[RMDB]
Chemical mapping of a 207-nucleotide RNA with 2A3. 2A3 adducts were read by reverse transcription with SuperScript II with manganese. The reactions ran in a buffer of 150 mM KOAc, 10 mM MgCl2 and 150 mM bicine (pH 8.5), at 24 C. The data come from the RNA Mapping Database (RMDB), library PDB130.

RNA sequence: GGGAACGACUCGAGUAGAGUCGAAAACUAUGGGGCACAAGUUGCAGGAUGCAGCGCCUUACAAGAAGUUCGCUGAACAAGCAACCGUUACCCCCCGCGCUCUGAGAGCGGCUCUAUUGGUCCGAGACCAAUGUGCGCCGUGGAUCAGACACGCGGUCCAUUGGCUGAUGUUCGCAUCAGCCAAUGGAAAAGAAACAACAACAACAAC
Reactivity to 2A3 in 0.01 (KOAc 150mM, MgCl2 10mM, bicine 150mM(pH8.5), 24C), signal-to-noise 1, nucleotides 027 to 156: c050u070a090u190g020g000g020g030c080a060c030a240a060g020u000u000g000c000a020g040g110a160u230g040c000a000g010c000g010c010c000u060u070a110c040a000a100g230a120a030g010u170u300c000g000c010u000g030a040a030c000a020a000g000c010a000a000c000c030g070u130u060a080c000c000c000c000c000c000g000c000g000c010u000c000u000g000a020g000a000g010c000g010g010c000u070c000u040a000u000u000g000g020u000c120c210g170a030g010a110c000c000a010a000u070g030u020g300c040g000c020c000g000u040g000g110a060u000c000a000g000a010c030a020c030g000c000g010g000u000